[RMDB]
RNA sequence: GGGAACGACUCGAGUAGAGUCGAAAAAAUAAUUCACAUAAUCUCAUACAUAUGUUAUGAUGGGUUUUGCAUGCAGUACAAUUUAAAGGAAGUGUAGCUCAUAUAACAUUUUCAAAAAUAGGUAUUGAGCCGGUAAUUAAUUCGUUAAUUACCGGCUAAAAGAAACAACAACAACAAC
Reactivity to 2A3 in 0.01 (KOAc 150mM, MgCl2 10mM, bicine 150mM(pH8.5), 24C), signal-to-noise 3, nucleotides 027 to 126: a000a000u300a050a120u140u170c110a080c030a130u210a160a060u130c050u030c060a020u030a160c070a080u130a010u050g070u080u000a040u050g300a030u020g050g000g000u010u080u300u070g030c000a000u020g050c030a000g120u110a080c030a210a190u080u160u300a300a090a070g110g000a090a160g000u010g000u000a020g000c000u000c010a000u020a000u000a020a000c000a000u100u020u070u110c110a100a130a030a030a040u130a110g150g000u060a030u040u200g010
Reactivity to DMS in 0.01 (KOAc 150mM, MgCl2 10mM, bicine 150mM(pH8.5), 24C), signal-to-noise 2, nucleotides 027 to 126: a050a110u020a040a060u030u000c150a110c030a080u020a070a070u020c040u000c070a140u050a120c170a040u000a060u000g000u000u000a020u000g010a030u010g000g000g000u000u030u030u000g000c030a030u000g060c120a080g040u010a100c090a060a020u030u020u030a110a150a090g000g010a150a060g010u000g000u000a020g000c030u010c090a020u000a010u040a000a000c000a000u000u000u000u030c070a080a100a020a070a010u000a090g000g000u000a020u010u000g000
Structure probing data (2A3 and DMS) for a 177-nucleotide construct. The RNA was probed in 150 mM KOAc, 10 mM MgCl2 and 150 mM bicine (pH 8.5) at 24 C. For 2A3, 869 sequencing reads were counted.